[RMDB]
Chemical mapping of a 177-nucleotide RNA with 2A3. The 2A3 profile rests on 748 reads. The reactions ran in a buffer of 150 mM KOAc, 10 mM MgCl2 and 150 mM bicine (pH 8.5), at 24 C.
RNA sequence: GGGAACGACUCGAGUAGAGUCGAAAACGGGACCGCCGGGCUCCCCGCGCUCUAGGGCAGGCGGAGAGGGAAGCGGCCGAACAGCUCGAGGCUGGGGGCUCGCGGGCGCGGCCGCGUGCCGCGGGGACAUUCGGAGGUCCUUCGGGACCUCCGAAUGAAAAGAAACAACAACAACAAC
Reactivity to 2A3 in 0.01 (KOAc 150mM, MgCl2 10mM, bicine 150mM(pH8.5), 24C), signal-to-noise 1, nucleotides 027 to 126: c010g040g050g020a040c000c000g050c050c090g030g070g010c000u010c000c090c000c000g000c000g080c030u080c040u190a240g050g010g010c010a020g010g030c020g080g000a050g070a000g000g120g050a110a130g130c090g110g030c030c000g040a120a080c040a060g010c000u060c080g020a000g020g000c020u030g080g000g040g020g040c000u030c000g000c000g010g000g000c020g040c010g010g020c030c020g220c140g060u190g030c030c000g000c000g010g000g010g010a020